Structure probing data (2A3) for a 177-nucleotide construct. For 2A3, 619 sequencing reads were counted. For 2A3 the reverse transcriptase was SuperScript II with manganese.
[RMDB]
RNA sequence: GGGAACGACUCGAGUAGAGUCGAAAAGGGCAAGAGACAUCCUACACCUUCCUCCCAUCCUUGCCCCGAAAGUCAUGGGCACUGGGGUCCAAGGUGCCCUCACUAUUUGACCUUUCUUGCUGGUGGCGCCGCGUUGAGCAUUCGUGCUCAACGCGGCAAAAGAAACAACAACAACAAC
Reactivity to 2A3 in 0.01 (KOAc 150mM, MgCl2 10mM, bicine 150mM(pH8.5), 24C), signal-to-noise 1, nucleotides 027 to 126: g000g000g000c060a080a070g050a010g030a000c030a120u070c000c040u120a070c070a020c020c000u130u010c000c000u010c020c030c010a040u100c000c000u000u020g030c000c000c000c000g040a130a050a000g060u050c050a210u180g000g000g010c020a040c000u020g000g000g040g010u010c130c000a040a000g000g020u020g010c000c000c000u000c000a020c000u190a290u160u060u110g050a040c010c000u090u110u080c010u020u170g080c020u000g000g050u030g000g000c040